An RNA of 177 nucleotides, treated with DMS and 2A3 and read out base by base.
The data come from the RNA Mapping Database (RMDB), library TTRDES.
The 2A3 profile rests on 31,924 reads.
The reactions ran in a buffer of 150 mM KOAc, 10 mM MgCl2 and 150 mM bicine (pH 8.5), at 24 C.
For DMS, 11,112 sequencing reads were counted.
For DMS the reverse transcriptase was MarathonRT.
Values are in units of 0.01, from 0 to 300, in steps of 10.
RNA sequence: GGGAACGACUCGAGUAGAGUCGAAAAGAUAUGGAGCAUCUACAGGGAACAACAGCCUAGUUCGGAAACGAACUAGGACAUGUUCUAGUAGAGUGCUCCUAAGUCAAACGUGUACUUCGGUACACGAGUUGUGUUAAUUCUUCGGAAUUAACACAACAAAAGAAACAACAACAACAAC
Reactivity to DMS in 0.01 (KOAc 150mM, MgCl2 10mM, bicine 150mM(pH8.5), 24C), signal-to-noise 7, nucleotides 027 to 126: g010a080u000a300u010g000g000a010g020c000a100u000c000u000a010c000a160g000g000g000a010a010c000a030a110c300a170g000c000c000u000a010g010u000u000c000g010g000a110a120a230c000g000a010a000c000u000a000g010g010a010c080a080u000g010u000u000c010u000a130g010u000a010g000a030g030u000g000c010u000c000c000u000a010a060g020u000c030a100a140a230c010g000u000g000u010a000c000u000u020c200g030g010u000a010c000a000c000g000a060
Reactivity to 2A3 in 0.01 (KOAc 150mM, MgCl2 10mM, bicine 150mM(pH8.5), 24C), signal-to-noise 6, nucleotides 027 to 126: g040a010u070a040u190g000g000a000g000c000a010u010c010u010a010c030a100g300g000g020a030a010c020a010a040c040a130g020c010c000u000a000g000u010u010c000g020g030a070a090a040c010g000a000a000c010u000a000g000g010a000c000a030u010g000u000u000c000u010a010g000u000a000g030a040g030u060g010c000u000c010c000u000a030a000g020u000c040a080a040a110c010g000u000g010u000a000c010u050u090c300g120g000u010a000c010a000c000g010a030